[RMDB]
RNA sequence: GGGAACGACUCGAGUAGAGUCGAAAAAGGAUACGCUGGGUCCAUACAGCGUAAGGUAGAGCUUGGACCUACCUGAAGCGCGCACGGGUAGCUAGCUCUACUGAGCGCUGUGGACCUGUGCUGAAGCGCGCACGGCAACCGAAAGGUGCGAAUGAAAGCUCAUGAGUAUCUUCGGAUACUCAUGAGCAAAAGAAACAACAACAACAAC
Reactivity to 2A3 in 0.01 (KOAc 150mM, MgCl2 10mM, bicine 150mM(pH8.5), 24C), signal-to-noise 1, nucleotides 027 to 156: a020g230g000a110u190a150c020g000c000u010g010g000g000u040c000c000a020u090a250c030a030g000c000g010u010a000a180g020g000u000a010g010a010g000c060u170u300g180g090a140c000c000u000a000c000c000u000g040a220a060g010c000g000c000g000c030a000c010g000g020g000u000a000g000c150u130a040g000c000u000c000u000a000c000u000g010a020g030c000g000c000u020g000u000g000g000a020c000c000u000g010u140g000c000u000g040a130a030g010c030g000c000g000c000a040c030g010g000c000a020a020c030c000g030a020a060a040g010g020u000g000c040g020a010a070u160g120a130a080a000
Chemical mapping of a 207-nucleotide RNA with 2A3. The RNA was probed in 150 mM KOAc, 10 mM MgCl2 and 150 mM bicine (pH 8.5) at 24 C. 2A3 adducts were read by reverse transcription with SuperScript II with manganese.